[RMDB]
RNA sequence: GGGAACGACUCGAGUAGAGUCGAAAAGGGCAGGAUAUGUGAAGUAGGCCCACCGGAAAUCCGGUGUUCCUUCUUCACUUUCCCUUAUUCGCACCUUCGGUACUCAACGGGAAUCCUGCUCUGCGAGUGAAUGGUUUUUGUUCGCAAAAACCAUUCAAAAAGAAACAACAACAACAAC
Reactivity to DMS in 0.01 (KOAc 150mM, MgCl2 10mM, bicine 150mM(pH8.5), 24C), signal-to-noise 4, nucleotides 027 to 126: g010g010g020c000a010g000g000a020u000a050u020g010u000g000a010a000g000u000a000g020g000c200c180c000a010c020c000g000g020a170a150a190u050c000c000g010g000u000g000u000u000c000c000u010u010c000u010u000c000a000c000u000u000u010c010c010c000u010u040a160u040u030c140g010c080a070c040c040u010u030c160g000g010u010a060c060u000c160a070a200c290g000g000g010a070a080u000c000c000u000g000c000u000c000u000g000c150g010a110g010
Reactivity to 2A3 in 0.01 (KOAc 150mM, MgCl2 10mM, bicine 150mM(pH8.5), 24C), signal-to-noise 8, nucleotides 027 to 126: g000g000g000c010a010g010g010a040u080a080u300g010u010g000a000a000g000u020a000g000g000c000c000c000a010c000c000g010g020a170a250a080u190c010c000g000g000u000g000u000u000c000c000u000u010c000u000u000c000a000c000u000u010u010c000c000c000u030u090a150u080u150c090g020c080a090c010c010u190u180c110g050g010u070a060c030u050c180a110a040c090g020g000g000a010a030u000c000c000u000g000c000u000c010u010g030c040g010a060g070

An RNA of 177 nucleotides, treated with DMS and 2A3 and read out base by base. The data come from the RNA Mapping Database (RMDB), libraries RFM100 and RFMREP.